[RMDB]
RNA sequence: GGGAACGACUCGAGUAGAGUCGAAAACUGGUGUACGACUCGCAGAGGCAUUGCUCUCGGUGGAGUGAUCCGCUAGAUCAGACUAGCGGGUUGUGGAUCUCAGAGUCGGAGUCCAUUCGGAACCAGGGCGGAAUUGGUCGUUCGCGAUCGAUUUCGCAAAAGAAACAACAACAACAAC
Reactivity to 2A3 in 0.01 (KOAc 150mM, MgCl2 10mM, bicine 150mM(pH8.5), 24C), signal-to-noise 9, nucleotides 027 to 126: c010u010g000g010u030g030u070a010c000g000a000c000u000c010g030c030a020g000a010g040g000c140a300u110u300g030c050u040c010u010c070g050g050u110g120g050a010g000u020g000a000u000c000c000g000c000u010a010g010a120u190c120a050g150a220c010u000a000g000c000g000g000g000u000u010g000u010g010g020a100u080c010u000c060a060g030a050g250u110c070g030g000a010g020u000c000c000a010u030u030c010g010g010a010a010c000c000a000g010g040
Reactivity to DMS in 0.01 (KOAc 150mM, MgCl2 10mM, bicine 150mM(pH8.5), 24C), signal-to-noise 9, nucleotides 027 to 126: c000u000g000g010u000g000u020a140c020g000a020c010u000c000g000c020a070g010a020g000g010c020a230u030u040g010c060u030c000u000c010g010g020u010g000g010a030g000u010g000a010u000c000c000g000c000u000a000g000a110u030c270a160g010a190c000u000a010g010c000g000g000g010u000u000g010u000g000g000a030u040c010u000c030a140g010a070g000u020c080g010g000a030g000u000c000c000a030u010u000c010g000g000a180a070c010c000a020g000g000
This 177-nucleotide RNA was probed chemically with 2A3 and DMS. The RNA was probed in 150 mM KOAc, 10 mM MgCl2 and 150 mM bicine (pH 8.5) at 24 C. The DMS profile rests on 69,625 reads. In probing experiments dimethyl sulfate is read out at A N1 and C N3, which are open when not base-paired.